Structure probing data (DMS and 2A3) for a 177-nucleotide construct.

[RMDB]
RNA sequence: GGGAACGACUCGAGUAGAGUCGAAAACGCGGAUCGCGAGACGGCCGCCACAGGCCCGCACCCGGCAGCCCGCCCGGGAUUCCCGAAUAUGCGGAAGACCCCUACGCGAUCUCAUACGGCGGCCAGCCGGGUGAGGCUGAUUCGUCAGCCUCACCCGAAAAGAAACAACAACAACAAC
Reactivity to DMS in 0.01 (KOAc 150mM, MgCl2 10mM, bicine 150mM(pH8.5), 24C), signal-to-noise 3, nucleotides 027 to 126: c100g030c060g000g000a030u000c010g000c050g020a160g020a150c200g010g000c000c010g020c040c010a180c090a300g000g010c120c020c020g000c020a170c050c000c020g000g050c050a100g010c140c020c030g000c070c020c000g010g000g000a220u000u000c010c000c000g000a190a120u040a130u010g020c030g000g010a080a080g020a230c050c010c010c010u000a120c040g010c000g000a050u010c070u010c070a080u010a120c180g010g040c020g000g000c000c020a140g000c090
Reactivity to 2A3 in 0.01 (KOAc 150mM, MgCl2 10mM, bicine 150mM(pH8.5), 24C), signal-to-noise 5, nucleotides 027 to 126: c100g010c050g020g020a040u040c030g010c040g040a040g070a100c120g010g000c010c010g000c010c000a070c010a010g070g010c010c010c000g000c010a040c000c000c000g010g000c020a060g090c020c020c040g020c010c010c000g010g000g030a050u040u030c000c010c000g020a060a150u210a110u220g020c010g020g040a030a040g090a100c000c020c010c000u040a040c030g020c000g030a070u010c020u010c060a090u120a130c060g000g000c000g000g000c010c000a010g020c030
Overview
The RNA was probed in 150 mM KOAc, 10 mM MgCl2 and 150 mM bicine (pH 8.5) at 24 C. For DMS the reverse transcriptase was MarathonRT.